[RMDB]
RNA sequence: GGGAACGACUCGAGUAGAGUCGAAAAUAAUACACAGGAUUGGUUUAAUUCUACAUGACUGGACCAGUAUGUACCUGAAAGAAAAAUCAAGCUUGUUGGAAUAUCAUUUGACCAGAGAUCUAUCAUGUAUAAAUAACAUGUUCGCAUGUUAUUUAUAAAAAGAAACAACAACAACAAC
Reactivity to DMS in 0.01 (KOAc 150mM, MgCl2 10mM, bicine 150mM(pH8.5), 24C), signal-to-noise 8, nucleotides 027 to 126: u000a070a060u000a130c030a040c020a020g000g000a040u000u000g000g010u000u000u010a090a190u000u000c030u000a040c040a030u000g020a040c040u000g010g010a160c240c070a050g010u000a020u000g010u000a050c210c140u010g010a060a060a080g000a020a070a040a020a010u000c020a020a030g000c010u000u000g000u000u010g010g000a100a100u000a030u000c060a050u000u000u000g010a140c010c010a130g000a100g000a070u000c080u000a090u010c100a080u000g000
Reactivity to 2A3 in 0.01 (KOAc 150mM, MgCl2 10mM, bicine 150mM(pH8.5), 24C), signal-to-noise 4, nucleotides 027 to 126: u020a000a030u080a020c010a000c000a010g000g020a030u010u010g000g000u020u030u050a090a050u130u000c010u020a020c000a030u090g160a140c020u050g010g130a090c070c010a010g020u010a020u040g020u050a060c040c080u030g080a100a070a030g030a030a180a010a000a000u030c010a000a000g020c020u060u060g060u100u080g140g020a130a040u050a020u100c060a020u030u050u150g040a030c010c010a020g020a010g000a190u030c020u080a120u150c070a090u170g020

The record gives the reactivity of an RNA of 177 nucleotides to DMS and 2A3.
The reactions ran in a buffer of 150 mM KOAc, 10 mM MgCl2 and 150 mM bicine (pH 8.5), at 24 C.
DMS adducts were read by reverse transcription with MarathonRT.